[RMDB]
RNA sequence: GGGAACGACUCGAGUAGAGUCGAAAAUGUACUGGUUGAGGUGCGGAUGCGGCCCCAGAUACGUUCUGGUCUAGUGUAAAAGCCAUUCUUAUUCUCCUUGAGAAGCUUUAGCUGUAAGUUGGGAAGCUUUGGAUUGUCCAGUUGCUCUCUUAACUAGCUUUUCAUCCCAAUUCGUUGGGAUGAAAAGAAAAGAAACAACAACAACAAC
Reactivity to 2A3 in 0.01 (KOAc 150mM, MgCl2 10mM, bicine 150mM(pH8.5), 24C), signal-to-noise 1, nucleotides 027 to 156: u170g010u050a040c030u080g010g060u040u100g040a050g000g090u050g110c080g000g050a080u130g000c030g000g000c000c000c000c000a020g010a030u060a040c120g040u060u060c020u020g040g040u050c050u110a050g000u070g060u150a060a130a030a000g020c040c050a070u010u000c010u040u080a100u150u060c020u060c050c000u080u090g070a010g040a070a070g000c010u040u100u120a030g020c010u040g080u210a100a090g010u060u020g060g000g000a050a020g010c000u110u030u030g030g020a070u030u190g060u110c000c050a050g010u040u070g020c000u020c000u000c000u030u030a080a040c000u080a040g060
Reactivity to DMS in 0.01 (KOAc 150mM, MgCl2 10mM, bicine 150mM(pH8.5), 24C), signal-to-noise 2, nucleotides 027 to 156: u000g010u010a050c050u000g010g010u000u000g000a100g010g030u020g020c060g020g040a150u000g010c030g050g040c010c070c030c020a050g020a060u010a080c110g020u000u000c020u000g010g020u010c040u010a080g000u010g000u000a030a080a060a100g010c020c010a090u010u010c030u000u000a060u000u000c040u000c030c080u000u020g030a100g000a040a040g020c020u000u000u000a110g020c010u000g020u000a070a100g010u000u010g000g010g010a080a040g050c020u000u000u010g030g020a120u000u000g010u000c000c040a300g010u010u000g030c030u020c190u000c010u010u000a030a070c050u000a120g020